[RMDB]
This 177-nucleotide RNA was probed chemically with DMS and 2A3. The RNA was probed in 150 mM KOAc, 10 mM MgCl2 and 150 mM bicine (pH 8.5) at 24 C. For 2A3 the reverse transcriptase was SuperScript II with manganese.
RNA sequence: GGGAACGACUCGAGUAGAGUCGAAAAGACGCCUGAUGGCGAACGUGCGCAAGAUAAGAAUGGUGGUAUAUACUGCCGAGAAUAACUAAUGGACGGCAGAGCGCACGCACCACCAACGUCCACCAGACAUGGGAGUGAUAUUCGUAUCACUCCCAUGAAAAGAAACAACAACAACAAC
Reactivity to DMS in 0.01 (KOAc 150mM, MgCl2 10mM, bicine 150mM(pH8.5), 24C), signal-to-noise 6, nucleotides 027 to 126: g000a130c020g000c000c010u000g020a170u040g000g010c000g020a110a140c010g000u000g000c000g030c000a160a080g000a180u050a100a100g000a110a100u010g010g000u000g010g000u020a080u040a090u020a100c020u000g000c010c000g000a080g020a130a070u050a090a110c230u030a120a120u010g000g010a230c020g010g000c000a010g000a160g000c010g000c000a000c010g010c080a080c040c020a140c120c110a070a070c230g000u030c000c000a040c020c020a100g020a210
Reactivity to 2A3 in 0.01 (KOAc 150mM, MgCl2 10mM, bicine 150mM(pH8.5), 24C), signal-to-noise 6, nucleotides 027 to 126: g080a010c000g020c000c040u160g130a130u300g020g020c010g010a040a010c000g000u030g000c000g000c010a050a070g040a300u150a170a070g100a090a080u040g010g010u030g010g020u020a100u010a010u030a200c000u000g000c000c000g020a030g060a060a100u200a070a030c090u110a100a080u170g100g080a040c010g000g000c000a000g010a000g020c010g000c000a000c000g000c020a030c000c000a020c000c020a030a020c060g060u010c000c010a010c000c000a020g040a050
For DMS the reverse transcriptase was MarathonRT. For 2A3, 7,644 sequencing reads were counted.